[RMDB]
RNA sequence: GGGAACGACUCGAGUAGAGUCGAAAAGAUAUGGAGAAUGUUGGAAUGAGCGCAGUUCGGAAACGAACUGCAGCUCGAGAGAACACUUCUCCUAAGUCAAACGACUACCGGUUCGCCGGUAGUCGAAGAUUAUUUAGACCUUCGGGUCUAAAUAAUCAAAAGAAACAACAACAACAAC
Reactivity to DMS in 0.01 (KOAc 150mM, MgCl2 10mM, bicine 150mM(pH8.5), 24C), signal-to-noise 4, nucleotides 027 to 126: g010a040u000a040u020g000g000a020g000a000a020u000g010u000u000g000g020a060a160u020g010a000g040c000g000c000a010g010u000u000c010g030g000a010a000a040c010g010a010a000c000u000g010c010a020g070c000u010c010g000a110g020a300g000a020a000c010a000c300u000u000c000u000c000c000u000a010a100g000u000c000a110a180a300c030g010a010c000u000a000c000c000g050g020u010u010c300g020c000c000g000g010u000a000g010u000c000g000a030a070
Reactivity to 2A3 in 0.01 (KOAc 150mM, MgCl2 10mM, bicine 150mM(pH8.5), 24C), signal-to-noise 3, nucleotides 027 to 126: g010a000u020a010u050g000g000a010g010a010a040u020g010u030u020g160g200a300a300u300g020a060g000c000g010c020a000g000u010u000c000g020g000a020a010a010c010g000a000a020c000u000g020c010a000g000c010u000c010g010a020g000a010g010a000a000c000a010c170u010u000c000u000c000c000u000a000a000g000u000c030a100a110a170c030g000a000c010u000a000c010c000g030g080u050u070c260g060c140c000g000g030u020a010g000u000c000g000a000a000